[RMDB]
The record gives the reactivity of an RNA of 177 nucleotides to DMS and 2A3. For 2A3, 2,023 sequencing reads were counted. DMS adducts were read by reverse transcription with MarathonRT.

RNA sequence: GGGAACGACUCGAGUAGAGUCGAAAACAGUGAUGGAAACAUCACUGAAAAACCGGAAACGGACAUGACGAUCGCGCACAUGUCGGGAAACCGUAAAUGCGAAAAGAGCUAGCGAAAGCUAGCUCAACGUGGCCUAUAUCUUCGGAUAUAGGCCACGAAAAGAAACAACAACAACAAC
Reactivity to DMS in 0.01 (KOAc 150mM, MgCl2 10mM, bicine 150mM(pH8.5), 24C), signal-to-noise 1, nucleotides 027 to 126: c000a030g030u000g000a000u010g000g020a160a040a190c000a020u040c000a000c000u000g000a000a040a060a120a050c110c000g000g000a030a110a110c020g000g000a110c000a010u030g000a180c120g000a060u000c300g020c070g000c210a040c000a000u000g000u030c000g000g000g030a140a150a110c090c050g020u000a080a100a090u050g000c110g000a000a070a200a120g000a000g000c000u000a000g000c040g000a020a090a150g050c000u000a000g000c030u000c000a010a050
Reactivity to 2A3 in 0.01 (KOAc 150mM, MgCl2 10mM, bicine 150mM(pH8.5), 24C), signal-to-noise 3, nucleotides 027 to 126: c000a000g030u000g000a000u000g000g050a050a010a000c000a000u000c000a000c010u000g020a040a010a000a000a000c010c000g050g020a120a100a000c040g030g030a000c000a020u030g080a020c080g110a110u100c050g010c000g010c060a020c020a030u040g020u010c020g030g030g030a090a050a010c010c000g000u060a000a090a120u300g050c060g050a030a090a010a040g000a000g000c010u010a000g010c010g050a100a020a020g000c030u000a000g010c000u000c000a000a010